Structure probing data (2A3 and DMS) for a 177-nucleotide construct. The 2A3 profile rests on 3,562 reads.

[RMDB]
RNA sequence: GGGAACGACUCGAGUAGAGUCGAAAAGAUAUGGAUCCCUAUGUGGGAGCUAUCACUCGGAAACGAGUGUUAGCGAAGAACACACGGGAUCCUAAGUCAAAGGGCCUCCACUUCGGUGGAGGCCCAACAUGUGUUUACACUUCGGUGUAAACACAUGAAAAGAAACAACAACAACAAC
Reactivity to 2A3 in 0.01 (KOAc 150mM, MgCl2 10mM, bicine 150mM(pH8.5), 24C), signal-to-noise 1, nucleotides 027 to 126: g000a000u010a010u030g000g000a020u020c000c040c030u020a180u300g030u010g000g070g060a190g000c000u000a000u030c000a000c000u010c000g000g000a000a020a010c000g000a000g010u010g000u000u010a010g010c030g020a080a060g110a040a010c020a000c000a010c000g010g030g010a000u020c000c000u000a020a000g010u000c010a090a100a140g010g020g000c000c000u030c000c000a020c020u130u180c300g150g000u000g040g040a000g030g020c000c030c000a020a000
Reactivity to DMS in 0.01 (KOAc 150mM, MgCl2 10mM, bicine 150mM(pH8.5), 24C), signal-to-noise 3, nucleotides 027 to 126: g010a010u000a050u020g000g010a000u000c000c000c010u000a170u020g020u000g010g000g020a130g000c000u000a000u000c010a010c000u000c000g000g000a010a010a030c010g000a000g010u000g000u000u000a000g020c000g000a120a140g020a120a190c010a010c000a080c300g000g000g010a010u000c000c000u010a000a090g000u000c010a090a140a150g030g000g010c010c010u000c000c010a010c000u000u010c270g030g020u000g000g000a010g000g000c000c010c000a010a010